RNA sequence: GGGAACGACUCGAGUAGAGUCGAAAAUCUACUCCCUUCGGGGAGUAGAAAAUAAACUUGACGAAUGCCGGUCAAGAAAAACGGCAUUCUAAGAUUCCCGAAAAAGGAACUCCUUCGGGAGUUCCAAGUGUCGUAUUAAGUUCGCUUAAUACGACACAAAAGAAACAACAACAACAAC
Reactivity to DMS in 0.01 (KOAc 150mM, MgCl2 10mM, bicine 150mM(pH8.5), 24C), signal-to-noise 1, nucleotides 027 to 126: u000c000u000a000c000u000c000c000c000u000u010c250g060g000g000g000a020g000u000a000g000a010a000a050a090u010a050a120a100c000u000u000g000a150c230g000a040a000u000g000c000c000g030g060u000c120a110a130g000a050a090a100a040a050c020g000g000c000a010u000u000c000u030a040a010g000a180u000u000c000c000c000g030a010a060a090a130a060g000g020a000a000c000u030c000c010u000u030c230g000g040g000a000g000u000u000c000c000a000a010
Reactivity to 2A3 in 0.01 (KOAc 150mM, MgCl2 10mM, bicine 150mM(pH8.5), 24C), signal-to-noise 2, nucleotides 027 to 126: u000c000u000a000c000u000c010c000c000u000u020c180g080g000g000g000a010g000u000a000g000a000a000a000a000u020a010a020a010c020u030u040g090a020c050g020a020a000u010g000c000c010g010g070u210c210a200a260g140a300a060a020a010a000c000g010g000c000a000u020u000c020u020a000a000g000a050u000u020c010c030c000g020a020a080a000a010a010g000g040a020a000c000u000c030c050u140u140c300g140g010g000a010g000u000u000c000c000a010a000